[RMDB]
RNA sequence: GGGAACGACUCGAGUAGAGUCGAAAAAUCCUGCCCUUCGGGGCAGGAUGCAGCUUCGCUCUUGAGAGCGCGACUUAAGAGGAAUCGCAACGCGCAGAAGCACUAUUUCUCAGUUCGCUGAGAAAAACAUCCCUAGACGUUUCGACGUCUAGGGAUGAAAAGAAACAACAACAACAAC
Reactivity to DMS in 0.01 (KOAc 150mM, MgCl2 10mM, bicine 150mM(pH8.5), 24C), signal-to-noise 2, nucleotides 027 to 126: a020u000c000c000u000g030c010c000c010u010u000c140g070g030g010g050c010a010g000g020a000u000g000c220a090g000c060u010u000c030g000c040u010c030u000u000g030a140g000a120g000c020g000c090g000a130c090u000u000a030a130g010a020g010g020a080a080u000c080g010c140a080a090c170g010c030g010c120a060g020a040a010g040c030a160c180u020a120u000u000u010c010u010c000a010g000u000u000c240g010c030u010g000a030g010a010a020a010a120a130
Reactivity to 2A3 in 0.01 (KOAc 150mM, MgCl2 10mM, bicine 150mM(pH8.5), 24C), signal-to-noise 1, nucleotides 027 to 126: a000u010c000c000u000g000c000c000c020u040u080c290g030g000g010g000c020a000g000g000a000u010g000c010a020g000c020u040u040c020g000c030u010c010u050u160g090a010g000a010g150c030g000c010g040a090c040u040u060a050a010g060a010g090g100a060a100u120c050g000c080a070a100c080g040c010g000c080a050g010a020a000g040c020a020c060u160a200u050u040u000c020u000c010a010g010u020u050c140g020c040u000g000a000g000a010a000a000a000a000